[RMDB]
RNA sequence: GGGAACGACUCGAGUAGAGUCGAAAAGGCGACAAAGAGAGCAGGGUUCGAGGCUUCAGUUCAUGGGGCCUGGAAGGCUGUUUUACGUGUGGGUCAGACUCAACGGCCGGAGGCCAAGGUCAAGUUGAUCCUGUAUCCUUUUCGAAGGAUACAGGAUAAAAGAAACAACAACAACAAC
Reactivity to 2A3 in 0.01 (KOAc 150mM, MgCl2 10mM, bicine 150mM(pH8.5), 24C), signal-to-noise 6, nucleotides 027 to 126: g020g000c020g010a050c060a020a190a040g120a030g020a010g040c020a010g030g060g120u050u080c070g100a000g000g000c010u020u010c010a060g040u110u070c080a090u130g020g000g010g000c000c000u020g020g020a010a010g110g040c010u000g050u060u040u050u120a070c090g020u060g020u060g050g030g040u030c030a020g010a040c010u010c060a040a030c040g020g000c000c040g040g020a050g030g000c020c010a020a030g030g000u030c040a030a050g030u040u070g060
Reactivity to DMS in 0.01 (KOAc 150mM, MgCl2 10mM, bicine 150mM(pH8.5), 24C), signal-to-noise 7, nucleotides 027 to 126: g000g010c020g000a070c080a050a080a100g010a100g010a050g000c030a030g000g000g010u010u020c020g010a050g000g010c010u010u000c010a040g020u030u030c280a100u010g010g000g000g000c000c010u000g000g010a030a030g000g000c010u010g000u000u000u010u010a070c120g020u010g010u000g000g000g010u010c050a080g010a150c040u010c080a070a130c150g000g010c010c040g010g010a080g010g020c020c030a090a110g000g010u000c040a050a120g020u010u020g000